RNA sequence: GGGAACGACUCGAGUAGAGUCGAAAACUACCUUUGCUGAGUUGGAAGCUGCGCAGAAAGCCUAUCAGGAAGCUAUGGACUCUGGUGACACCUCACCACAAGUUCUUAAGGCUUUGCAGAAGGCUGUAACCAUAGUACUUCGGUACUAUGAAAAGAAACAACAACAACAAC
Reactivity to DMS in 0.01 (KOAc 150mM, MgCl2 10mM, bicine 150mM(pH8.5), 24C), signal-to-noise 9, nucleotides 027 to 129: c060u020a100c050c030u020u020u020g000c030u010g010a100g040u010u010g000g000a090a060g020c060u010g000c120g000c130a070g020a110a100a040g000c030c010u020a140u030c060a130g020g010a020a020g000c000u010a180u010g030g000a000c010u020c300u020g010g000u010g020a080c280a170c300c260u040c010a010c000c000a000c300a080a030g010u030u000c000u040u040a070a140g020g000c030u010u010u010g000c060a060g010a050a030g020g000c000u010g000u040a060a070c160
Reactivity to 2A3 in 0.01 (KOAc 150mM, MgCl2 10mM, bicine 150mM(pH8.5), 24C), signal-to-noise 9, nucleotides 027 to 129: c040u100a080c010c000u080u100u140g000c020u050g030a040g070u090u030g090g030a040a010g020c030u060g010c070g000c040a020g120a130a050a010g010c010c000u220a300u170c020a030g090g060a020a000g000c010u040a090u180g000g000a000c010u000c020u040g000g010u000g030a040c040a100c130c080u040c000a010c010c010a010c020a030a020g000u030u020c000u050u120a190a100g040g000c000u010u020u050g090c020a030g020a050a010g000g000c020u020g030u050a030a010c020

The record gives the reactivity of an RNA of 170 nucleotides to DMS and 2A3. The reactions ran in a buffer of 150 mM KOAc, 10 mM MgCl2 and 150 mM bicine (pH 8.5), at 24 C. The DMS profile rests on 101,067 reads. The data come from the RNA Mapping Database (RMDB), library 15KLIB. For 2A3, 37,443 sequencing reads were counted. For DMS the reverse transcriptase was MarathonRT.